[RMDB]
RNA sequence: GGGAACGACUCGAGUAGAGUCGAAAAGGGAAAAUCUGAGUUCGGUCAUCUUUGUUGUUCGUCCUACCGCAGUAUAUUCCUAAACACUAUGAAAUGACCCUAGUUGGUCCAUGAUCAUUUGGGUAAAGACUAGAGUGUUGUUCGCAACACUCUAGUCAAAAGAAACAACAACAACAAC
Reactivity to 2A3 in 0.01 (KOAc 150mM, MgCl2 10mM, bicine 150mM(pH8.5), 24C), signal-to-noise 1, nucleotides 027 to 126: g170g030g060a030a000a000a120u040c020u000g030a030g030u000u080c000g000g080u020c010a000u090c080u050u100u110g100u040u080g000u060u090c020g020u010c000c020u010a050c010c000g020c000a030g050u010a100u050a010u140u000c000c000u030a040a190a000c060a040c080u080a050u130g130a070a000a090u130g010a010c000c060c010u030a080g080u130u090g050g000u000c110c010a130u150g060a020u100c050a040u050u090u090g030g040g000u090a110a090a030
Reactivity to DMS in 0.01 (KOAc 150mM, MgCl2 10mM, bicine 150mM(pH8.5), 24C), signal-to-noise 1, nucleotides 027 to 126: g020g010g020a050a090a160a090u000c010u010g010a090g020u000u010c010g000g020u000c160a070u010c020u020u000u020g010u000u010g020u000u030c010g020u000c010c010u000a100c040c000g000c040a020g010u000a040u000a180u000u000c000c000u000a070a130a070c060a110c060u000a060u000g010a050a120a060u000g010a010c050c000c030u000a080g030u000u010g000g000u000c050c070a070u000g000a070u010c100a030u010u010u000g000g030g010u010a070a070a070
Structure probing data (2A3 and DMS) for a 177-nucleotide construct.
The RNA was probed in 150 mM KOAc, 10 mM MgCl2 and 150 mM bicine (pH 8.5) at 24 C.
For DMS the reverse transcriptase was MarathonRT.
For DMS, 1,011 sequencing reads were counted.
Values cover nucleotides 27 to 126.
2A3 adducts were read by reverse transcription with SuperScript II with manganese.